[RMDB]
Description:
The record gives the reactivity of an RNA of 177 nucleotides to DMS and 2A3. The 2A3 profile rests on 1,514 reads.
RNA sequence: GGGAACGACUCGAGUAGAGUCGAAAAUCGUGAUCACGACUAUCGAUCGGCCGGCCGGAUCUGAGAGUACACUGUGAUCACGACGGCCGCGCGUGGCCGUCGGCGCGAUCAUAUGUGGCCGGCGCCAACGGCGAAGGAAGUUCGCUUCCUUCGCCGUAAAAGAAACAACAACAACAAC
Reactivity to DMS in 0.01 (KOAc 150mM, MgCl2 10mM, bicine 150mM(pH8.5), 24C), signal-to-noise 1, nucleotides 027 to 126: u000c020g030u000g010a020u010c000a070c010g000a030c080u000a120u010c100g040a020u000c010g000g010c000c030g020g000c000c020g000g000a030u000c030u010g000a060g010a090g010u000a100c220a120c110u020g000u000g000a030u000c000a050c020g030a020c020g000g000c010c010g000c220g000c190g000u000g010g000c000c000g010u000c000g000g010c160g010c090g010a030u000c060a080u010a080u030g020u000g040g030c000c000g000g040c000g020c030c070a110
Reactivity to 2A3 in 0.01 (KOAc 150mM, MgCl2 10mM, bicine 150mM(pH8.5), 24C), signal-to-noise 2, nucleotides 027 to 126: u050c010g020u010g020a020u020c030a020c130g100a060c080u050a030u130c030g030a020u000c020g040g050c000c010g020g030c040c000g080g080a070u000c030u180g110a080g010a020g110u030a080c110a030c110u050g040u010g010a010u000c010a000c030g020a000c000g010g000c000c010g080c000g040c110g140u300g080g020c070c030g010u010c020g000g040c100g000c050g050a010u060c030a020u100a100u300g110u070g040g040c000c020g010g000c000g020c000c020a030
Record summary
Conditions: 150 mM KOAc, 10 mM MgCl2 and 150 mM bicine (pH 8.5), 24 C. For DMS, 1,627 sequencing reads were counted.